[RMDB]
RNA sequence: GGGAACGACUCGAGUAGAGUCGAAAAUAAAAUCGUAGCGCGAGACGAUCGACGUAAAUCGCUCAAACUACUCGAGACCAAAGGAAUACGCUUCGGUAACUCGCUCUAAUCCCGAGCGAUAAAUGAAGCUUUAUUACGGAUUCGUCCGUAAUAAAGCAAAAGAAACAACAACAACAAC
Reactivity to 2A3 in 0.01 (KOAc 150mM, MgCl2 10mM, bicine 150mM(pH8.5), 24C), signal-to-noise 2, nucleotides 027 to 126: u060a000a080a000a050u050c020g000u000a000g000c020g000c010g050a040g020a050c030g000a060u060c050g070a060c050g040u080a000a110a110u070c030g030c030u000c050a070a070a060c010u040a020c010u000c040g030a030g040a050c050c000a100a030a040g140g020a170a050u090a090c030g000c090u050u060c010g030g000u020a080a060c010u010c030g000c010u000c000u030a040a070u000c030c000c000g010a010g000c000g010a020u090a030a100a040u150g050a040a000
Reactivity to DMS in 0.01 (KOAc 150mM, MgCl2 10mM, bicine 150mM(pH8.5), 24C), signal-to-noise 3, nucleotides 027 to 126: u010a050a090a090a120u000c010g010u010a070g020c130g000c130g000a050g000a080c020g010a030u010c020g010a110c100g010u000a020a090a080u010c050g000c020u000c070a070a080a130c010u000a010c020u010c020g000a020g010a130c060c070a050a080a090g000g000a130a110u000a040c210g010c010u000u000c040g010g010u000a110a100c120u000c000g000c030u000c000u000a100a150u010c050c020c060g000a030g000c000g020a010u020a040a050a110u010g000a070a070